[RMDB]
RNA sequence: GGGAACGACUCGAGUAGAGUCGAAAAGAUGGGAACGACUCGAGUAGAGUCGAAAUUAAGAAUCGGAAGCAUGAGAACCGAGACAUACAUGCAAUCGCGAACUAGAGGAGAAACUCCUCUAGAAAUAGAUCAUAUGCCCAUUCGUGGGCAUAUGAUCAAAAGAAACAACAACAACAAC
Reactivity to DMS in 0.01 (KOAc 150mM, MgCl2 10mM, bicine 150mM(pH8.5), 24C), signal-to-noise 2, nucleotides 027 to 126: g000a210u080g000g000g000a150a120c000g000a000c050u000c000g000a080g010u000a110g000a030g030u000c040g000a030a050a090u090u040a160a070g020a300a090u000c000g000g090a060a090g000c000a000u000g000a100g000a060a080c000c060g030a020g000a060c040a110u020a210c000a060u000g000c030a040a100u080c120g020c200g000a020a170c090u000a010g000a000g010g000a010g020a100a040a160c170u000c000c000u000c000u000a000g000a040a090a020u060a110
Reactivity to 2A3 in 0.01 (KOAc 150mM, MgCl2 10mM, bicine 150mM(pH8.5), 24C), signal-to-noise 2, nucleotides 027 to 126: g080a060u220g000g010g020a000a070c010g000a000c000u030c010g000a000g070u110a010g050a000g000u000c000g000a000a000a000u150u040a140a030g080a060a020u170c000g000g010a010a010g000c010a000u030g000a000g030a120a030c020c000g000a010g060a110c010a030u100a020c000a000u040g010c020a030a090u180c090g020c060g140a000a030c000u000a000g000a000g040g000a000g030a050a170a110c160u000c000c000u000c000u020a000g000a000a000a000u080a000